[RMDB]
RNA sequence: GGGAACGACUCGAGUAGAGUCGAAAACAGUGAGACUUCGGUCUCACUGAAAUGACUAUGCACCAUGACGAGGACGAAGAUGCGGAGGACGACGACGAACAAAAACAGCAAGGUUCGCCUUGCUGAACGAAGUGUAAAACUUCGGUUUUACACUUCGAAAAGAAACAACAACAACAAC
Reactivity to 2A3 in 0.01 (KOAc 150mM, MgCl2 10mM, bicine 150mM(pH8.5), 24C), signal-to-noise 6, nucleotides 027 to 126: c010a010g010u000g010a000g010a000c010u050u110c260g110g000u000c000u000c010a010c010u000g000a000a000a010u090g010a010c030u050a040u210g020c030a030c040c010a070u080g050a050c050g020a030g040g000a010c040g040a070a030g040a050u090g020c030g020g020a020g030g000a020c030g010a000c030g010a010c020g040a100a030c070a060a080a020a010a020c010a000g000c000a000a000g030g020u040u060c180g090c010c000u000u000g000c000u000g000a000a000
Reactivity to DMS in 0.01 (KOAc 150mM, MgCl2 10mM, bicine 150mM(pH8.5), 24C), signal-to-noise 6, nucleotides 027 to 126: c000a010g000u000g020a020g000a010c000u000u010c180g050g010u000c000u000c000a000c000u010g000a010a060a090u010g010a090c060u000a080u020g010c060a090c060c040a080u010g000a060c070g000a060g000g010a060c080g010a070a060g020a070u000g010c060g000g010a090g010g000a060c050g010a060c090g010a060c060g010a060a070c160a050a060a070a080a140c000a010g000c000a000a010g000g010u000u010c220g020c000c000u000u000g000c000u000g000a030a070

Structure probing data (2A3 and DMS) for a 177-nucleotide construct. The DMS profile rests on 7,270 reads. Conditions: 150 mM KOAc, 10 mM MgCl2 and 150 mM bicine (pH 8.5), 24 C. The 2A3 profile rests on 12,623 reads. Source: RMDB library M2PK50, as collected in RNAgym. Reactivities are rounded to 0.1 and cut off at 0 and 3.